An RNA of 177 nucleotides, treated with DMS and 2A3 and read out base by base.
Values cover nucleotides 27 to 126.
The reactions ran in a buffer of 150 mM KOAc, 10 mM MgCl2 and 150 mM bicine (pH 8.5), at 24 C.
For DMS, 3,924 sequencing reads were counted.
RNA sequence: GGGAACGACUCGAGUAGAGUCGAAAAGUCAGAAAGUACACCAUACUUCUACGUCGGCAACUUACCACAAGUCAACCAGUAUGCAACAAGAAUCGACCGAGAGGAUACAUGCUGUUACUACCACGAACCACUCUCUAGUAUUCGUACUAGAGAGUGGAAAAGAAACAACAACAACAAC
Reactivity to DMS in 0.01 (KOAc 150mM, MgCl2 10mM, bicine 150mM(pH8.5), 24C), signal-to-noise 5, nucleotides 027 to 126: g010u010c090a050g010a100a050a050g000u000a050c040a080c140c100a130u000a080c040u000u000c040u020a070c120g010u000c050g010g000c060a050a070c060u010u010a080c080c070a060c110a050a070g000u000c060a070a080c060c030a080g000u000a050u010g010c050a040a040c070a040a090g000a100a040u000c070g000a080c070c040g000a080g000a100g000g020a110u000a040c110a030u000g020c070u000g020u000u000a050c040u010a100c050c050a090c190g010a090a200
Reactivity to 2A3 in 0.01 (KOAc 150mM, MgCl2 10mM, bicine 150mM(pH8.5), 24C), signal-to-noise 6, nucleotides 027 to 126: g050u040c040a010g140a080a150a000g050u060a020c040a050c050c020a030u040a090c020u020u020c020u040a040c030g090u050c000g010g020c020a080a050c050u070u060a040c010c010a040c040a100a010g040u060c020a010a050c030c010a040g050u050a040u100g060c040a070a040c010a110a060g050a110a080u060c060g080a080c070c040g050a050g000a020g090g030a010u040a090c030a020u070g020c010u020g020u070u040a050c020u050a040c000c050a040c090g040a050a020